[RMDB]
RNA sequence: GGGAACGACUCGAGUAGAGUCGAAAAGAUAUGGAGAUGAGGUCCGAAGAACGUACUGUUUGUCGGAAACGAUGAUAGUACGGGAGGACACUCAUCUCCUAAGUCAAAAGUCUGCUUCGGCAGACAACGUUAUGAGGGAGUUCGCUCCCUCAUAACGAAAAGAAACAACAACAACAAC
Reactivity to DMS in 0.01 (KOAc 150mM, MgCl2 10mM, bicine 150mM(pH8.5), 24C), signal-to-noise 2, nucleotides 027 to 126: g000a050u000a300u000g000g020a010g010a030u000g010a020g010g020u000c000c000g000a110a140g000a090a150c000g010u000a020c000u000g000u010u010u020g080u010c000g000g000a080a120a130c000g020a020u000g010a020u000a000g010u000a030c000g010g000g000a040g010g000a000c010a060c020u000c000a000u000c010u010c000c000u000a020a030g000u020c030a060a120a080a250g010u000c000u000g010c020u000u020c160g010g000c000a000g040a000c000a050a080
Reactivity to 2A3 in 0.01 (KOAc 150mM, MgCl2 10mM, bicine 150mM(pH8.5), 24C), signal-to-noise 1, nucleotides 027 to 126: g010a020u070a020u150g010g010a020g000a080u000g010a010g010g020u010c020c020g090a150a030g020a030a000c010g010u010a010c010u020g220u230u250u300g090u030c010g000g030a050a020a010c020g010a020u020g020a030u030a030g010u000a030c000g010g030g000a010g030g000a000c010a030c030u000c000a000u000c000u010c000c000u010a010a000g030u000c010a000a000a000a260g000u000c000u000g020c000u080u080c230g130g000c030a030g020a030c000a000a020
The record gives the reactivity of an RNA of 177 nucleotides to DMS and 2A3. For DMS, 1,467 sequencing reads were counted. As a SHAPE reagent, 2A3 marks flexible, mostly unpaired nucleotides at the ribose 2'-OH. DMS (dimethyl sulfate) methylates the pairing face of unpaired adenines and cytosines. For DMS the reverse transcriptase was MarathonRT. The 2A3 profile rests on 2,327 reads. It was measured as part of the RMDB library TTRDEL. Reactivities are given for positions 27 through 126.